[RMDB]
RNA sequence: GGGAACGACUCGAGUAGAGUCGAAAAUGAUCGAGAGAUCUAACGAUGUACGCGAGUCAAUCGCACAGACUCGAGCGAAAGCUCGGUCGAAAGACCGCGUACAUCGGUCGGCAAGUGUACAGUCAAACAUAGGUAUAUGGUUCGCCAUAUACCUAUGAAAAGAAACAACAACAACAAC
Reactivity to 2A3 in 0.01 (KOAc 150mM, MgCl2 10mM, bicine 150mM(pH8.5), 24C), signal-to-noise 7, nucleotides 027 to 126: u100g010a010u010c010g000a010g010a010g000a120u010c010u020a090a030c010g010a010u000g000u010a000c000g030c020g030a080g040u000c030a000a060u050c040g010c080a120c030a130g050a020c040u090c260g000a000g000c000g060a120a010a010g020c000u000c010g000g010u010c030g000a010a010a000g000a000c000c000g010c000g000u000a000c000a000u000c000g000g020u050c040g030g050c070a110a100g080u090g040u220a100c090a060g060u050c090a090a070a050
Reactivity to DMS in 0.01 (KOAc 150mM, MgCl2 10mM, bicine 150mM(pH8.5), 24C), signal-to-noise 9, nucleotides 027 to 126: u010g010a010u000c010g000a250g000a230g000a010u000c000u010a080a110c010g010a010u000g000u000a000c000g010c000g010a130g020u000c000a040a220u000c080g020c240a110c240a210g000a020c020u010c020g010a010g010c000g010a120a080a150g010c000u000c000g010g000u000c000g000a030a040a290g000a010c000c000g010c010g010u000a010c000a000u000c000g000g010u000c070g010g000c080a050a080g020u000g010u010a070c150a080g000u010c090a080a120a190
Annotation
Structure probing data (2A3 and DMS) for a 177-nucleotide construct. Source: RMDB library OK2TRN, as collected in RNAgym. Reactivities are rounded to 0.1 and cut off at 0 and 3. The DMS profile rests on 39,787 reads. 2A3 adducts were read by reverse transcription with SuperScript II with manganese.